[RMDB]
Description
An RNA of 177 nucleotides, treated with 2A3 and DMS and read out base by base. For DMS the reverse transcriptase was MarathonRT. The data come from the RNA Mapping Database (RMDB), library M2PK90. The reactions ran in a buffer of 150 mM KOAc, 10 mM MgCl2 and 150 mM bicine (pH 8.5), at 24 C.
RNA sequence: GGGAACGACUCGAGUAGAGUCGAAAAACAAAGAGCAACACGCGCAGUCACGCAGGCAGAUGGAAUAAUCUGCCAAGAAUAACUAAUGGACGGUAGACUGCGCGAACGACCGACCAAUAGAAAAAAACAAUAAUACCCUGUUCGCAGGGUAUUAUUGAAAAGAAACAACAACAACAAC
Reactivity to 2A3 in 0.01 (KOAc 150mM, MgCl2 10mM, bicine 150mM(pH8.5), 24C), signal-to-noise 4, nucleotides 027 to 126: a000c060a010a110a020g120a020g040c020a010a030c010a010c060g000c000g010c010a010g010u010c000a000c090g070c070a080g010g000c000a000g000a010u040g020g050a190a030u110a140a070u070c000u000g000c010c000a000a000g010a020a050u180a060a030c050u060a090a030u040g020g020a010c000g010g010u000a020g000a010c000u000g000c020g000c000g000a000a010c020g020a010c010c000g010a010c000c000a050a050u120a100g120a040a120a020a010a000a000a010
Reactivity to DMS in 0.01 (KOAc 150mM, MgCl2 10mM, bicine 150mM(pH8.5), 24C), signal-to-noise 4, nucleotides 027 to 126: a100c070a060a110a060g010a110g010c060a070a040c060a220c030g000c000g020c010a010g000u000c000a200c210g010c180a130g010g020c000a010g000a000u000g000g030a160a090u010a060a070u000c000u000g010c000c010a050a030g010a100a070u010a060a100c080u010a030a080u000g000g000a130c010g030g010u010a050g000a000c010u000g000c010g000c000g000a020a020c200g010a050c010c020g010a080c010c010a080a040u020a070g010a010a010a070a060a060a060a110